Structure probing data (2A3 and DMS) for a 177-nucleotide construct.
The RNA was probed in 150 mM KOAc, 10 mM MgCl2 and 150 mM bicine (pH 8.5) at 24 C.
For DMS, 7,545 sequencing reads were counted.
For DMS the reverse transcriptase was MarathonRT.

RNA sequence: GGGAACGACUCGAGUAGAGUCGAAAACGGUGCCGGCGUGGGUGAGGCCCACGUCCAGGGGGCAGGCGACGAUUCGCGUGGGAAGCACCCGGGUGAUGACCGCGGGGAAGCGCCUUCGGUACGCCAGCACGGUACAUCAAUUCGUUGAUGUACCGUGAAAAGAAACAACAACAACAAC
Reactivity to 2A3 in 0.01 (KOAc 150mM, MgCl2 10mM, bicine 150mM(pH8.5), 24C), signal-to-noise 2, nucleotides 027 to 126: c030g030g020u080g020c040c030g020g000c000g000u000g000g000g020u080g160a120g120g160c000c010c000a010c010g020u010c010c020a040g030g010g000g020g000c040a030g010g000c020g010a100c020g060a120u070u040c050g010c030g120u060g000g060g040a060a070g030c010a050c000c010c040g210g020g000u070g030a200u120g110a040c010c020g080c020g070g000g010g020a060a050g030c010g030c000c000u030u020c010g000g010u040a040c010g010c010c010a020g010
Reactivity to DMS in 0.01 (KOAc 150mM, MgCl2 10mM, bicine 150mM(pH8.5), 24C), signal-to-noise 5, nucleotides 027 to 126: c100g010g010u010g020c040c050g000g000c030g020u000g000g010g010u010g000a190g030g000c000c010c010a030c030g020u000c010c080a110g000g000g010g000g020c300a080g020g010c010g010a060c080g010a160u000u000c090g010c020g010u000g000g010g010a160a110g010c070a210c010c030c060g000g010g010u000g010a080u000g000a190c030c010g010c030g010g000g000g000a070a110g000c050g000c010c020u000u000c020g000g020u010a050c040g010c040c030a130g000